[RMDB]
RNA sequence: GGGAACGACUCGAGUAGAGUCGAAAAAUGGCCCAGUCGCCGACCCGCCGUUCCACCUUGGCGUACGCGCUGGAGGUGUUGUGCCGCAGCGGAAUCCGCACCUCAAUUAGGACCUCGUUGUGGGCGAACGACAGAUUGGCUUCGGCCAAUCUGUCGUAAAAGAAACAACAACAACAAC
Reactivity to 2A3 in 0.01 (KOAc 150mM, MgCl2 10mM, bicine 150mM(pH8.5), 24C), signal-to-noise 1, nucleotides 027 to 126: a000u140g100g040c000c000c000a090g040u100c020g000c030c030g080a140c000c000c020g000c010c000g130u120u120c000c000a010c000c000u000u080g000g000c000g070u070a010c150g060c000g020c110u100g090g000a010g140g000u110g010u000u080g000u120g040c000c000g040c010a030g020c020g000g040a020a030u000c000c000g010c040a040c040c010u110c020a020a160u140u100a030g020g020a100c000c050u020c030g000u030u080g030u010g000g070g000c000g000a000